[RMDB]
RNA sequence: GGGAACGACUCGAGUAGAGUCGAAAACAGCGGCCACAACAUGAACCCUGUCUUCAUAUACGUGGUGCCGAAGCCCUGCCCCCGCGUGCGUAUCGUGCUCCCCGGUUUGUGCGCUCGGCCGGUACGCGCGCAGUGCUAGGUUCGCCUAGCACUGCGCAAAAGAAACAACAACAACAAC
Reactivity to DMS in 0.01 (KOAc 150mM, MgCl2 10mM, bicine 150mM(pH8.5), 24C), signal-to-noise 1, nucleotides 027 to 126: c120a070g010c020g030g000c000c020a020c040a120a160c240a050u000g000a000a070c100c100c140u000g000u010c120u000u000c020a060u010a110u010a130c180g000u000g010g010u010g000c010c040g010a050a080g000c050c010c070u000g000c020c000c010c000c030g030c030g000u000g000c020g020u000a030u000c000g000u000g000c020u000c030c010c070c050g000g000u000u010u020g020u000g000c030g000c070u010c110g000g000c040c010g010g020u000a010c020g010c020
Overview:
Structure probing data (DMS) for a 177-nucleotide construct. It was measured as part of the RMDB library OK2TRN. Reactivities are rounded to 0.1 and cut off at 0 and 3. The reactions ran in a buffer of 150 mM KOAc, 10 mM MgCl2 and 150 mM bicine (pH 8.5), at 24 C.